[RMDB]
Description
Conditions: 150 mM KOAc, 10 mM MgCl2 and 150 mM bicine (pH 8.5), 24 C. Structure probing data (2A3) for a 207-nucleotide construct. Reactivities are rounded to 0.1 and cut off at 0 and 3.

RNA sequence: GGGAACGACUCGAGUAGAGUCGAAAAGGGACGCCUUUAGAAGAAGAGGCUAGGUGGUAUUCCGGUGUGGGAUACUUGGUAAUAUGUAACGCUAAUUGCAUAAGAUUGUAGGACGGAAUUUAGAGUCAAAACGGUCCUGCGUUCGCGCAGGACCGAACACAACGUUAGGGUUCGCCCUAACGUUGUGAAAAGAAACAACAACAACAAC
Reactivity to 2A3 in 0.01 (KOAc 150mM, MgCl2 10mM, bicine 150mM(pH8.5), 24C), signal-to-noise 2, nucleotides 027 to 156: g000g000g020a000c060g010c000c000u060u100u100a170g000a150a030g010a010a030g020a050g020g020c060u060a030g010g070u100g040g050u060a040u090u000c070c060g050g060u200g010u170g020g070g000a000u000a020c040u020u100g060g020u060a070a060u050a090u100g060u020a020a020c040g000c230u170a100a000u080u060g000c000a000u020a070a030g000a130u040u160g070u060a040g040g040a000c040g000g030a010a010u120u080u090a090g000a000g030u030c040a020a000a060a080c020g000g000u000c000c020u020g000c020g000u030u060c290g010c000g000c060a010g000g020a000c000c010g000a000a000